[RMDB]
RNA sequence: GGGAACGACUCGAGUAGAGUCGAAAAGAUACUGAUGACAGGCCUUCAGGGUUUAAAUAGUUUUGGUGGGUCUACCUGCCAAUUUUGAAGGGAGUAGUUUGAUAGGACCUGGCUGGUAGAAUUGACCGGUAUGGUCAAUAUUCGUAUUGACCAUACCAAAAGAAACAACAACAACAAC
Reactivity to DMS in 0.01 (KOAc 150mM, MgCl2 10mM, bicine 150mM(pH8.5), 24C), signal-to-noise 8, nucleotides 027 to 126: g000a230u010a030c020u010g010a090u000g010a090c080a050g010g010c020c010u000u000c040a040g000g000g010u010u010u000a030a090a100u000a090g000u000u000u000u000g010g030u000g010g010g010u010c150u010a080c020c000u000g010c010c000a020a020u000u000u010u010g010a090a090g000g010g010a120g010u000a050g000u000u010u000g000a100u010a080g000g010a150c040c010u000g010g010c020u000g000g000u000a010g000a110a120u000u000g000a110c070c050
Reactivity to 2A3 in 0.01 (KOAc 150mM, MgCl2 10mM, bicine 150mM(pH8.5), 24C), signal-to-noise 7, nucleotides 027 to 126: g040a030u060a050c020u060g080a100u090g050a080c030a030g050g030c010c000u020u020c030a020g060g040g040u030u130u140a070a110a060u130a080g060u050u030u100u050g020g000u030g010g030g010u030c060u070a190c010c000u000g000c000c000a020a020u070u100u090u170g110a060a040g050g020g020a040g040u120a020g020u020u130u140g090a090u090a060g030g020a070c010c010u010g020g000c000u010g010g000u010a010g030a140a100u040u070g060a030c000c030